[RMDB]
RNA sequence: GGGAACGACUCGAGUAGAGUCGAAAACACAACUGCGAAGGGGGGACGGAGAAGGCUAUGUUGGCCGGGCGACGGUUGUCCCGGUUUAAGCGUGUAGGCUGGAUUUCCAGGCAAAUCCGGAAUUGAAUAACUAUGGAGUCUUCGGACUCCAUAGUUAAAAAGAAACAACAACAACAAC
Reactivity to DMS in 0.01 (KOAc 150mM, MgCl2 10mM, bicine 150mM(pH8.5), 24C), signal-to-noise 2, nucleotides 027 to 126: c040a130c090a050a110c070u000g030c070g040a070a080g000g010g000g000g010g010a070c050g000g020a070g020a120a080g010g010c050u000a040u000g020u000u000g020g000c030c030g000g000g010c300g010a050c130g000g020u000u020g010u000c020c010c000g020g000u010u000u010a040a080g030c080g000u010g010u010a100g010g000c000u010g000g000a110u000u000u010c030c060a150g000g010c090a050a030a060u010c010c010g000g000a080a080u010u010g000a110a090